[RMDB]
RNA sequence: GGGAACGACUCGAGUAGAGUCGAAAACCACACUCCUUCCCCCCUGCGGGCUCCCCCCAUAAGAUGACGAGGACCCCACUCAUCGGGGUCCGCAGUCUCAUCCUUUCUUACCUGAUGGCCGGCAUGGCAAUAGUAUGCUCUUCGGAGCAUACUAUUGAAAAGAAACAACAACAACAAC
Reactivity to DMS in 0.01 (KOAc 150mM, MgCl2 10mM, bicine 150mM(pH8.5), 24C), signal-to-noise 3, nucleotides 027 to 126: c040c010a110c170a180c040u010c010c020u010u000c010c010c020c040c010c040u000g010c090g000g000g010c030u000c010c000c010c000c010c010a110u000a050a080g000a030u000g020a020c030g010a250g000g010a050c010c000c000c010a100c180u020c190a090u010c130g000g030g010g020u010c010c000g010c080a170g010u010c050u000c040a090u000c060c090u000u000u010c050u000u000a100c070c050u010g000a070u000g010g030c010c000g010g020c040a060u000g010g000
Structure probing data (DMS) for a 177-nucleotide construct. It was measured as part of the RMDB library 15KREP. Conditions: 150 mM KOAc, 10 mM MgCl2 and 150 mM bicine (pH 8.5), 24 C. The DMS profile rests on 2,817 reads.